[RMDB]
RNA sequence: GGGAACGACUCGAGUAGAGUCGAAAAGACAUCCUGAAGGACAUCAACAAGAAGACCGCCGGCAUGGGCAACGUACAGAGAGGCGCGAUCUUCAAGGACAUCGCCGGGCAGUACGCGGUUACCAGCUUCGGCACCCUGAUGCGCGCCGUCGAGGGCGGCAGAAGACAAUCUUCGGAUUGUCUUCUGCAAAAGAAACAACAACAACAAC
Reactivity to 2A3 in 0.01 (KOAc 150mM, MgCl2 10mM, bicine 150mM(pH8.5), 24C), signal-to-noise 2, nucleotides 027 to 156: g050a000c030a030u060c020c050u070g050a120a060g080g000a020c020a090u090c010a060a130c060a170a000g030a030a000g050a080c000c050g030c050c050g080g000c020a090u050g050g040g000c050a080a050c030g040u060a020c020a050g060a000g030a050g050g000c010g000c000g050a060u030c120u140u080c040a020a050g000g000a050c020a130u230c190g000c000c000g000g000g030c010a000g000u030a010c110g030c070g300g000u030u000a000c000c000a050g010c000u300u300c080g010g000c000a010c000c000c000u030g010a020u050g000c010g030c000g000c000c000g000u020c010g000a030g000g030g020c010g020
Reactivity to DMS in 0.01 (KOAc 150mM, MgCl2 10mM, bicine 150mM(pH8.5), 24C), signal-to-noise 1, nucleotides 027 to 156: g060a140c050a130u010c000c030u000g000a070a100g020g010a080c020a190u000c030a150a110c070a170a130g000a110a060g020a060c040c030g020c040c000g010g000c050a120u000g010g000g000c030a060a060c040g000u000a130c030a060g010a150g030a160g030g020c000g020c010g050a060u000c060u000u000c010a030a020g010g000a040c060a100u000c080g010c000c010g000g020g000c000a140g000u010a030c050g070c100g020g020u010u000a030c000c000a220g050c020u030u000c010g050g000c050a080c010c010c010u000g010a090u000g010c010g010c000g060c000c000g000u000c020g000a090g000g010g000c020g020